[RMDB]
RNA sequence: GGGAACGACUCGAGUAGAGUCGAAAAUGGAAAAUGCCACAUUGAUUGUCUCCGUCUAUUGUAUGGCCAUUUCCGUAAAUUACGAAAUUGCUUUUAGAGAUUGUUAAUGUGAUAUUGUCAGAUAAAAGAGCUGCAUAUGAUUCGUCAUAUGCAGCUCAAAAGAAACAACAACAACAAC
Reactivity to DMS in 0.01 (KOAc 150mM, MgCl2 10mM, bicine 150mM(pH8.5), 24C), signal-to-noise 2, nucleotides 027 to 126: u040g020g000a040a020a040a000u030g010c020c000a040c020a010u010u000g000a000u000u020g000u000c000u000c000c070g010u000c100u040a230u020u070g010u010a020u000g000g020c010c060a000u000u000u000c110c140g030u020a050a040a140u070u020a040c100g000a020a000a000u000u010g010c030u000u060u040u030a070g000a040g000a000u000u000g000u000u000a000a030u000g000u000g000a000u000a010u010u010g040u010c110a040g030a090u000a090a060a160a100
Reactivity to 2A3 in 0.01 (KOAc 150mM, MgCl2 10mM, bicine 150mM(pH8.5), 24C), signal-to-noise 5, nucleotides 027 to 126: u090g050g010a080a090a030a060u030g020c020c000a020c000a000u000u000g030a000u000u040g040u000c000u000c020c020g240u070c080u100a230u160u300g120u270a150u200g020g000c000c000a000u000u000u020c080c000g010u030a030a300a300u280u230a040c000g000a000a000a000u000u000g010c020u050u090u160u300a030g010a000g000a020u030u060g020u010u000a010a000u010g000u000g020a020u000a050u050u040g140u110c040a020g050a190u110a130a110a030a020